[RMDB]
RNA sequence: GGGAACGACUCGAGUAGAGUCGAAAAGAUAUGGACCCAAAGGACAUGCUGGGUGUCGGAAACGACACACAGCAACAGCCUUGGGUCCUAAGUCAAACAUUGGUAUUCUCUUCGGAGAAUACCAAUGCCAUAAGAGUAAGUUCGCUUACUCUUAUGGAAAAGAAACAACAACAACAAC
Reactivity to 2A3 in 0.01 (KOAc 150mM, MgCl2 10mM, bicine 150mM(pH8.5), 24C), signal-to-noise 7, nucleotides 027 to 126: g010a010u020a010u060g000g000a000c000c010c030a060a070a080g070g000a160c260a300u300g000c000u010g010g010g010u000g010u000c000g000g010a020a010a000c000g000a000c000a000c010a000c000a000g010c010a030a020c060a010g000c000c000u010u000g000g010g000u000c000c000u000a000a000g000u000c010a080a060a100c010a010u010u000g000g000u000a000u000u000c000u000c000u040u070c300g200g000a000g000a000a000u000a000c000c000a000a000u000g000
Reactivity to DMS in 0.01 (KOAc 150mM, MgCl2 10mM, bicine 150mM(pH8.5), 24C), signal-to-noise 9, nucleotides 027 to 126: g000a010u000a090u010g000g000a020c000c000c000a010a030a070g020g010a060c100a120u010g020c000u000g000g000g030u000g010u000c000g020g010a020a020a050c000g020a010c000a000c000a020c000a010g020c000a060a050c260a180g000c000c000u000u000g000g000g000u000c000c000u000a000a070g000u000c010a180a150a300c010a000u000u000g000g010u000a000u000u000c000u000c000u000u010c230g020g000a020g000a010a010u000a000c000c000a000a000u000g010
The record gives the reactivity of an RNA of 177 nucleotides to 2A3 and DMS. The RNA was probed in 150 mM KOAc, 10 mM MgCl2 and 150 mM bicine (pH 8.5) at 24 C. Values cover nucleotides 27 to 126. 2A3 adducts were read by reverse transcription with SuperScript II with manganese. It was measured as part of the RMDB library TTRDES.